[RMDB]
RNA sequence: GGGAACGACUCGAGUAGAGUCGAAAAGAGUUCGGUUGGAGCGACAUGUAUUUAGCUUGAGAUAGCUAAAUCACCUCGGUAUGAUUAGGGUGAGACCUAGGAACCGUAGGGGUAUUCUCAAAGGAAGGUUACCGAACAACCUUCGGGUUGUUCGGAAUCACAAUAGUAUCUUCGGAUACUAUUGUGAAAAAGAAACAACAACAACAAC
Reactivity to DMS in 0.01 (KOAc 150mM, MgCl2 10mM, bicine 150mM(pH8.5), 24C), signal-to-noise 4, nucleotides 027 to 156: g000a110g000u000u000c040g000g020u000u000g000g010a100g030c020g010a060c080a080u000g020u000a050u000u000u000a000g000c000u000u000g010a290g010a120u000a030g000c010u010a010a020a030u000c040a050c020c010u000c010g020g020u000a080u000g020a180u000u000a060g020g020g010u010g020a290g000a140c020c010u000a100g010g000a100a050c020c020g000u010a050g010g010g010g020u000a060u000u010c040u000c060a060a080a130g010g010a060a080g010g000u000u000a180c010c000g000a010a020c000a010a000c010c010u000u010c300g060g030g050u000u000g010u010u000c000g010g000a010a020
Reactivity to 2A3 in 0.01 (KOAc 150mM, MgCl2 10mM, bicine 150mM(pH8.5), 24C), signal-to-noise 5, nucleotides 027 to 156: g050a010g030u080u090c050g010g040u070u100g050g030a050g020c040g050a050c030a080u070g110u160a020u010u010u010a000g000c000u020u020g020a020g010a090u120a040g000c000u000a000a010a010u040c020a040c000c010u030c030g010g010u210a160u220g060a100u060u070a030g020g020g000u050g070a080g040a050c000c020u020a020g020g030a040a020c010c000g030u070a040g000g000g010g000u020a090u090u090c090u010c000a050a090a020g070g020a030a020g040g020u070u080a050c010c000g000a000a000c000a000a000c010c000u020u020c080g040g000g000u010u010g000u010u000c000g000g000a000a000
Annotation: The data come from the RNA Mapping Database (RMDB), library M2RFPK. Structure probing data (DMS and 2A3) for a 207-nucleotide construct. Conditions: 150 mM KOAc, 10 mM MgCl2 and 150 mM bicine (pH 8.5), 24 C. For 2A3, 5,568 sequencing reads were counted. For 2A3 the reverse transcriptase was SuperScript II with manganese. For DMS the reverse transcriptase was MarathonRT. Values cover nucleotides 27 to 156.